[RMDB]
RNA sequence: GGGAACGACUCGAGUAGAGUCGAAAACGGCAUGAUACCACCGUUAUCGGGUCAACAGAGUAGUUGCAAAUGACAACAAUGCUCAGGGUUAUGCUCUCGCUGCGUAAUGGCGGUGCGGGAAACCCACAAAAGAUAUUGAUCUUCGGAUCAAUAUCAACUAAUGGACAUUCUUCGGAAUGUCCAUUAGAAAAGAAACAACAACAACAAC
Reactivity to 2A3 in 0.01 (KOAc 150mM, MgCl2 10mM, bicine 150mM(pH8.5), 24C), signal-to-noise 9, nucleotides 027 to 156: c010g000g000c020a020u130g000a010u030a050c000c000a010c020c000g170u080u040a030u070c050g000g000g000u010c000a010a030c080a040g020a000g010u080a020g020u020u020g040c070a090a240a280u270g060a180c010a020a000c010a030a140u110g010c010u010c070a050g050g000g000u060u040a110u300g070c000u000c010u010c010g010c000u030g000c020g040u120a090a080u050g050g000c010g000g030u020g000c020g000g010g000a030a010a000c000c050c020a050c030a030a080a000a000g000a000u000a000u000u000g000a000u010c010u040u090c280g090g000a000u000c000a000a000u000a000u000c000a010a010
Reactivity to DMS in 0.01 (KOAc 150mM, MgCl2 10mM, bicine 150mM(pH8.5), 24C), signal-to-noise 2, nucleotides 027 to 156: c020g010g000c010a030u010g010a070u020a050c020c010a030c020c000g060u000u020a060u000c120g000g010g020u000c010a140a200c150a130g020a110g040u000a050g030u000u010g010c000a050a130a180u010g000a190c040a060a000c060a020a070u000g020c010u030c010a120g010g030g000u010u000a050u000g030c050u000c020u000c030g030c000u000g000c030g020u000a140a140u010g000g020c020g040g020u000g000c080g000g000g000a100a030a030c000c010c010a040c080a060a000a060a130g010a020u000a000u000u010g010a010u000c020u000u010c300g070g000a010u010c010a000a000u000a010u000c000a040a110
Structure probing data (2A3 and DMS) for a 207-nucleotide construct. Conditions: 150 mM KOAc, 10 mM MgCl2 and 150 mM bicine (pH 8.5), 24 C.